[RMDB]
RNA sequence: GGGAACGACUCGAGUAGAGUCGAAAACCACAGAUAUGGCUGACGCGCGGCGGCUAGCAGAUGAGAGUUAGGCGCAUAGUCUGGCAGGCCGGGGCGAUAGGCUUGCAGCAGACCCAUGCCGUCCGGUAUAGAACCCAUGAUUCGUCAUGGGUUCUAUAAAAGAAACAACAACAACAAC
Reactivity to DMS in 0.01 (KOAc 150mM, MgCl2 10mM, bicine 150mM(pH8.5), 24C), signal-to-noise 3, nucleotides 027 to 126: c020c000a220c230a110g010a100u040a050u020g000g010c050u010g000a050c080g000c100g000c040g000g010c020g010g010c040u010a030g000c020a080g010a120u030g010a150g000a100g010u010u020a060g010g000c020g060c030a070u010a170g010u000c000u000g000g020c040a030g010g000c000c020g000g000g020g010c060g000a040u010a100g010g010c010u000u020g020c010a100g040c040a010g000a050c020c110c120a090u040g010c020c020g010u000c010c060g010g050u030
Reactivity to 2A3 in 0.01 (KOAc 150mM, MgCl2 10mM, bicine 150mM(pH8.5), 24C), signal-to-noise 3, nucleotides 027 to 126: c000c000a040c020a040g130a050u190a050u130g060g030c030u030g010a020c010g070c000g020c020g100g000c010g000g000c010u050a010g000c000a010g040a180u230g050a080g030a040g110u050u060a050g020g030c000g000c010a000u020a010g030u000c030u000g010g000c000a020g000g000c000c000g000g000g080g060c090g080a110u080a110g020g000c000u010u020g010c000a030g100c000a000g000a040c020c000c010a060u090g000c000c000g030u030c000c020g010g000u030
An RNA of 177 nucleotides, treated with DMS and 2A3 and read out base by base.
As a SHAPE reagent, 2A3 marks flexible, mostly unpaired nucleotides at the ribose 2'-OH.
It was measured as part of the RMDB libraries RFM100 and RFMREP.
Conditions: 150 mM KOAc, 10 mM MgCl2 and 150 mM bicine (pH 8.5), 24 C.
The 2A3 profile rests on 2,052 reads.
For DMS the reverse transcriptase was MarathonRT.